RNA sequence: GGGAACGACUCGAGUAGAGUCGAAAAUUGGCGACUGUGACUUGCCAUCUGAGGCGUGGGUGAUCGCCGAGCAAAAGUGCAAGACCCCCAUCUCUGUCUUCUCCAUCGACUACGACGCCUCCUACCAGCAGGCCAAGUCUGUGCAGAAGUACUUGGGUCUGUAUACCUGAUUCGUCAGGUAUACAGAAAAAGAAACAACAACAACAAC
Reactivity to 2A3 in 0.01 (KOAc 150mM, MgCl2 10mM, bicine 150mM(pH8.5), 24C), signal-to-noise 3, nucleotides 027 to 156: u060u030g030g010c020g010a060c090u110g080u060g140a050c020u030u080g010c030c010a080u100c150u200g140a110g020g010c030g030u120g010g000g030u080g040a070u040c000g000c010c070g020a000g000c060a010a150a130a020g080u140g020c030a100a000g080a160c000c000c000c020c030a070u070c040u030c020u030g030u020c000u020u000c000u020c010c020a030u050c030g010a020c010u100a150c070g090a040c090g020c000c000u030c000c000u060a170c040c020a000g060c020a000g040g010c010c000a010a010g000u020c010u010g020u010g000c020a000g010a040a000g020u020a010c010u060u110g030g000g000
Reactivity to DMS in 0.01 (KOAc 150mM, MgCl2 10mM, bicine 150mM(pH8.5), 24C), signal-to-noise 3, nucleotides 027 to 156: u010u010g000g030c040g050a070c040u010g000u000g000a060c030u000u020g010c000c020a130u010c120u010g010a140g000g010c030g020u000g000g010g050u000g000a040u000c040g030c010c030g020a130g000c090a070a060a100a140g030u000g020c030a140a140g030a180c030c000c000c020c010a070u020c010u000c090u000g000u000c020u000u000c010u000c040c020a090u000c260g010a080c010u000a130c050g030a120c040g000c020c010u000c020c060u000a240c160c060a130g000c080a020g030g000c030c020a150a070g010u000c020u000g020u000g030c120a050g000a060a070g010u000a020c010u000u010g030g020g000